[RMDB]
RNA sequence: GGGAACGACUCGAGUAGAGUCGAAAAGUAAUAGAUAAUCGGAUGACGAGAAAGGGUGCGCUGAUAUCCGGUACGAAUGCUAGCAGUAAAUAGAAUAGCGCUCCUAAUACAACUAGCAACAAAAGGAUAAGGUAUCGUGAUGUCAAUCACAUUGCGAACCAGCGUAAAUGUUCGCAUUUACGCUGGUAAAAGAAACAACAACAACAAC
Reactivity to 2A3 in 0.01 (KOAc 150mM, MgCl2 10mM, bicine 150mM(pH8.5), 24C), signal-to-noise 2, nucleotides 027 to 156: g020u030a030a150u090a130g040a030u100a120a030u040c040g030g030a030u080g030a050c080g000a010g050a110a090a090g080g010g000u030g010c030g000c010u000g010a000u020a030u030c000c000g030g000u050a060c020g030a110a060u060g030c010u020a010g010c030a000g070u130a040a060a100u080a050g110a030a040u050a060g010c030g000c060u020c000c020u010a060a040u030a010c000a040a030c000u010a000g000c020a000a060c020a020a100a020a010g070g030a050u060a040a100g090g020u060a050u110c000g030u050g020a000u000g010u000c020a010a020u070c000a000c020a080u080u070g000c020g020a060
Reactivity to DMS in 0.01 (KOAc 150mM, MgCl2 10mM, bicine 150mM(pH8.5), 24C), signal-to-noise 1, nucleotides 027 to 156: g000u010a070a120u010a050g000a140u010a120a150u010c010g000g040a150u010g010a190c110g000a110g010a070a150a110g000g000g000u020g070c040g080c040u000g010a120u000a030u000c010c040g010g000u000a070c030g040a080a150u000g000c010u000a010g000c050a130g160u000a030a040a110u000a110g010a050a050u000a050g040c070g000c000u000c030c040u010a000a200u000a050c040a080a000c000u000a030g000c040a020a300c090a040a040a080a090g020g000a060u010a030a080g080g010u010a070u000c000g070u000g020a000u000g000u010c010a190a050u000c110a120c020a070u000u010g000c040g010a020
About this RNA:
The data come from the RNA Mapping Database (RMDB), library OK3TST. Chemical mapping of a 207-nucleotide RNA with 2A3 and DMS. Reactivities are given for positions 27 through 156. The DMS profile rests on 1,359 reads.